[RMDB]
RNA sequence: GGGAACGACUCGAGUAGAGUCGAAAACCCUAUAUUCAGAGGAAUCAUUAGGGGAUUGGAUGCAAAGAGAUGGUCAAGAGUGAACUUUGGAAACAAUGAUCAAGUUCCAUCAUUAGGGUCAUUACUCCUUAUCGGGAUUUUUCGAAAUCCCGAUAAGAAAAGAAACAACAACAACAAC
Reactivity to DMS in 0.01 (KOAc 150mM, MgCl2 10mM, bicine 150mM(pH8.5), 24C), signal-to-noise 5, nucleotides 027 to 126: c000c010c010u010a050u010a060u020u010c060a130g010a110g000g010a070a020u010c120a060u010u020a060g010g000g000g020a110u000u030g000g010a040u000g010c060a060a050a100g010a130g010a060u000g000g000u010c070a050a090g000a090g020u010g010a030a060c040u000u010u020g010g010a120a070a100c080a040a080u030g000a070u000c040a060a080g010u010u010c020c010a060u010c060a090u010u020a100g000g000g000u000c040a050u000u010a070c060u010c080
Reactivity to 2A3 in 0.01 (KOAc 150mM, MgCl2 10mM, bicine 150mM(pH8.5), 24C), signal-to-noise 7, nucleotides 027 to 126: c000c000c020u030a030u030a030u080u100c050a060g060a060g220g090a090a060u070c050a070u110u130a080g000g040g000g000a010u040u090g060g010a030u070g030c030a040a080a040g060a010g020a040u030g010g050u030c030a030a040g060a040g130u140g030a040a020c030u090u140u120g030g020a090a090a010c060a080a100u140g010a050u090c020a020a050g060u030u020c030c010a030u050c020a030u080u150a050g030g030g000u010c010a020u020u100a080c020u040c020